[RMDB]
Notes
An RNA of 177 nucleotides, treated with 2A3 and DMS and read out base by base. For DMS the reverse transcriptase was MarathonRT. For DMS, 803 sequencing reads were counted. Values are in units of 0.01, from 0 to 300, in steps of 10. Conditions: 150 mM KOAc, 10 mM MgCl2 and 150 mM bicine (pH 8.5), 24 C.
RNA sequence: GGGAACGACUCGAGUAGAGUCGAAAAUCGAGAACGACGACUGGAAGUACGACGUCAUCCCCGAAAUCUGGGAAGGCAAGAACGUCGCCGACUUUGUCGACCCAGACAUCCUCGAGAGCCUCGACGCACCGGAGUUAACUUUCGAGUUAACUCCGGUAAAAGAAACAACAACAACAAC
Reactivity to 2A3 in 0.01 (KOAc 150mM, MgCl2 10mM, bicine 150mM(pH8.5), 24C), signal-to-noise 1, nucleotides 027 to 126: u030c010g000a010g020a060a040c090g040a010c000g040a020c040u070g000g070a160a030g140u130a080c110g000a010c020g090u000c000a050u070c000c010c000c000g080a190a090a030u030c020u030g000g000g000a060a000g010g020c050a010a050g060a180a040c130g000u010c010g040c220c090g030a020c010u000u060u070g010u010c020g030a010c010c000c000a020g010a000c000a040u080c010c000u020c000g070a100g030a010g070c020c050u110c060g010a040c050g000c070
Reactivity to DMS in 0.01 (KOAc 150mM, MgCl2 10mM, bicine 150mM(pH8.5), 24C), signal-to-noise 2, nucleotides 027 to 126: u000c080g020a130g000a110a110c120g020a060c040g020a090c080u000g000g050a160a160g010u030a070c120g000a170c050g000u000c000a140u010c000c000c000c050g000a010a100a180u000c020u010g050g000g010a040a170g010g000c020a050a010g000a140a080c050g010u000c080g040c160c060g010a050c040u000u010u000g000u000c020g000a260c010c000c010a050g000a030c150a040u000c040c000u010c050g000a110g000a060g010c030c010u000c110g030a060c150g000c200